Background:
The record gives the reactivity of an RNA of 207 nucleotides to 2A3.
[RMDB]
RNA sequence: GGGAACGACUCGAGUAGAGUCGAAAAGAUUCGCCGUCGGCAUUUCCCCAGCAGCCAUGACCUACCAGGCUGCGGUGCGGCUCGCCGCACAGGUCAUCCCUCAUCUGGCGCGUCCUGCGUCCUUCCAAAAACUGACUAACCUUCGGGUUAGUCAGAAUCAACAGAAAACGUUCGCGUUUUCUGUUGAAAAAGAAACAACAACAACAAC
Reactivity to 2A3 in 0.01 (KOAc 150mM, MgCl2 10mM, bicine 150mM(pH8.5), 24C), signal-to-noise 2, nucleotides 027 to 156: g000a090u080u060c040g000c010c020g120u080c060g040g040c050a060u030u030u050c000c000c000c000a050g000c000a000g000c000c030a120u110g010a030c010c000u140a220c110c050a000g000g000c000u000g000c010g010g010u010g010c000g010g000c070u090c100g110c000c000g060c000a000c010a040g000g010u010c010a050u050c010c020c000u130c050a190u050c090u080g000g000c000g000c000g090u180c040c080u140g020c010g060u060c020c040u110u080c030c020a000a020a040a090a080c010u000g000a000c010u000a000a000c000c000u000u050c100g060g000g010u010u010a000g010u000c000a000g000a000a000
The reactions ran in a buffer of 150 mM KOAc, 10 mM MgCl2 and 150 mM bicine (pH 8.5), at 24 C.